An RNA of 177 nucleotides, treated with DMS and 2A3 and read out base by base. 2A3 adducts were read by reverse transcription with SuperScript II with manganese. The DMS profile rests on 4,429 reads. Conditions: 150 mM KOAc, 10 mM MgCl2 and 150 mM bicine (pH 8.5), 24 C.

RNA sequence: GGGAACGACUCGAGUAGAGUCGAAAAACAUAGGUUGGGCCAUAGGCGCUGCGGUUCAUCAUCUUGCCGUCGCCAGGACCGCUCCCGUUCUACUACUUGGCGUCGCGGAUACCGGGUUGGAAAACAAUGUUACAAUACCUUUCGAGGUAUUGUAACAAAAAGAAACAACAACAACAAC
Reactivity to DMS in 0.01 (KOAc 150mM, MgCl2 10mM, bicine 150mM(pH8.5), 24C), signal-to-noise 4, nucleotides 027 to 126: a070c120a100u010a060g020g010u020u000g030g010g010c000c030a080u000a110g010g010c020g020c300u000g020c040g000g000u000u000c080a070u000c110a080u000c050u010u010g020c020c030g010u000c040g000c010c030a090g000g000a050c060c020g000c040u000c010c020c020g010u000u010c030u000a090c090u000a060c060u010u000g000g020c030g020u010c050g030c050g000g020a100u000a070c050c030g000g000g010u000u010g000g010a070a040a070a090c160a060a090
Reactivity to 2A3 in 0.01 (KOAc 150mM, MgCl2 10mM, bicine 150mM(pH8.5), 24C), signal-to-noise 1, nucleotides 027 to 126: a020c030a080u170a070g000g140u080u100g050g020g030c060c030a090u060a150g030g000c060g010c050u070g000c000g040g000u060u060c010a060u030c000a040u040c090u080u140g030c010c020g030u010c000g000c000c020a000g050g020a050c010c020g020c020u010c020c010c000g010u040u050c060u070a100c000u040a040c000u020u040g070g000c010g000u030c030g000c030g010g020a040u040a040c050c020g000g000g000u080u010g020g000a040a070a000a000c020a120a090